[RMDB]
Conditions: 150 mM KOAc, 10 mM MgCl2 and 150 mM bicine (pH 8.5), 24 C. Chemical mapping of a 177-nucleotide RNA with 2A3 and DMS. For DMS the reverse transcriptase was MarathonRT. For DMS, 2,903 sequencing reads were counted. 2A3 adducts were read by reverse transcription with SuperScript II with manganese. For 2A3, 2,181 sequencing reads were counted. The data come from the RNA Mapping Database (RMDB), library OK2TRN.

RNA sequence: GGGAACGACUCGAGUAGAGUCGAAAAAUCGGCGCUUACACGACACAUAAAUCGCUUCUUUAACCUGGCGACCGAUGGUCAUGGUGGGGUUUAACGAGAACAGUGGAUCUUGGGAAAUGUAAGACACCUAGGAUUAGGGUUUCGACCCUAAUCCUAGAAAAGAAACAACAACAACAAC
Reactivity to 2A3 in 0.01 (KOAc 150mM, MgCl2 10mM, bicine 150mM(pH8.5), 24C), signal-to-noise 3, nucleotides 027 to 126: a000u070c040g080g000c080g010c020u050u090a040c050a000c050g030a020c040a000c020a160u160a070a110a050u040c020g000c000u090u010c020u050u190u020a060a060c020c050u000g080g010c050g050a100c010c030g130a110u060g000g030u070c050a050u150g090g040u120g010g030g000g010u000u070u070a040a030c050g000a010g020a130a030c040a050g040u090g080g040a020u010c050u030u050g040g000g020a000a110a000u110g030u100a000a020g020a020c040a020c050
Reactivity to DMS in 0.01 (KOAc 150mM, MgCl2 10mM, bicine 150mM(pH8.5), 24C), signal-to-noise 4, nucleotides 027 to 126: a050u000c070g000g030c050g020c040u000u000a080c100a100c070g000a160c080a060c100a060u010a080a070a080u000c040g000c030u000u000c100u020u010u010a070a100c120c170u000g020g010c030g020a070c020c030g030a110u000g000g010u000c050a110u000g020g010u000g000g000g000g010u000u000u000a050a060c150g000a070g000a050a060c100a090g020u000g010g000a050u000c040u000u000g000g010g000a050a100a050u000g030u000a040a090g000a090c110a080c160